RNA sequence: GGGAACGACUCGAGUAGAGUCGAAAACCGUAGGUGUUCGCUCAGCGUGUGCCUACCCUGUCCUCUCGCCAUGAAAAUCAGCUCAAUUCGAAAGAGUUGAGCUGAUUUUCAUGAAGCGAGAUGACAGGUAACCCGUUGAACCCGAACACCUAAACGGCAUAGGGGAUCACUUCGGUGAUCCCCUAUGAAAAGAAACAACAACAACAAC
Reactivity to DMS in 0.01 (KOAc 150mM, MgCl2 10mM, bicine 150mM(pH8.5), 24C), signal-to-noise 1, nucleotides 027 to 156: c010c000g080u000a030g000g010u010g010u000u000c040g040c030u000c020a020g040c020g020u000g020u000g030c010c030u000a250c170c010c020u010g010u000c010c030u000c000u000c000g030c030c010a000u010g000a010a020a000a000u010c000a020g090c010u000c000a000a020u000u000c010g030a190a180a300g000a020g020u000u000g000a020g010c000u000g020a000u000u000u000u020c000a000u010g000a090a140g040c010g000a020g000a010u010g020a020c000a000g000g020u000a030a050c020c010c000g000u010u000g000a060a040c090c090c030g040a040a010c010a020c000c000u000a000a010a100c040g000g000